About this RNA: Source: RMDB library TTRDEL, as collected in RNAgym. The record gives the reactivity of an RNA of 177 nucleotides to DMS. The reactions ran in a buffer of 150 mM KOAc, 10 mM MgCl2 and 150 mM bicine (pH 8.5), at 24 C.
[RMDB]
RNA sequence: GGGAACGACUCGAGUAGAGUCGAAAAGAUAUGGAGCCAAAUUCGAGCACAGGGACCAUCGGAAACGAUUAGUACCUGUGAACUACUCGAAUUGGCUCCUAAGUCAAAAGAUACCUUCGGGUAUCAAUCUGCAUUACAGGUUCGCCUGUAAUGCAGAAAAAGAAACAACAACAACAAC
Reactivity to DMS in 0.01 (KOAc 150mM, MgCl2 10mM, bicine 150mM(pH8.5), 24C), signal-to-noise 1, nucleotides 027 to 126: g020a040u010a300u000g040g020a010g010c010c040a000a010a180u000u000c000g050a010g010c020a010c000a020g010g000g000a050c160c190a060u010c010g010g000a190a070a150c020g000a030u000u000a000g010u000a080c000c000u010g000u000g000a000a020c020u000a300c000u010c000g050a050a040u000u020g000g010c000u000c000c000u000a000a100g010u000c070a160a060a050a100g000a000u000a010c000c010u000u000c160g040g010g020u010a010u000c000a110a040